[RMDB]
RNA sequence: GGGAACGACUCGAGUAGAGUCGAAAAGAUAUGGAUGCCCUUACAUUAACUAACAAGCUCGACGAUCGUCACAUCGGAAACGAUGUAAGACGGGAGAGUGUUAGUUAAUGUAAGGGCAUCCUAAGUCGACAGAUAACACGUUCGCGUGUUAUCUGUCAAAAGAAACAACAACAACAAC
Reactivity to DMS in 0.01 (KOAc 150mM, MgCl2 10mM, bicine 150mM(pH8.5), 24C), signal-to-noise 2, nucleotides 027 to 126: g020a080u000a300u000g000g020a010u000g010c000c000c000u010u000a010c000a010u000u000a000a000c000u000a010a010c040a030a180g020c000u000c010g030a160c300g000a100u000c000g020u000c120a060c000a010u000c000g030g000a100a110a200c000g020a020u000g000u020a060a100g000a010c000g000g000g000a080g030a020g010u000g000u000u000a000g000u000u000a010a000u000g000u000a020a000g010g000g010c000a000u000c000c000u000a000a090g010u000c120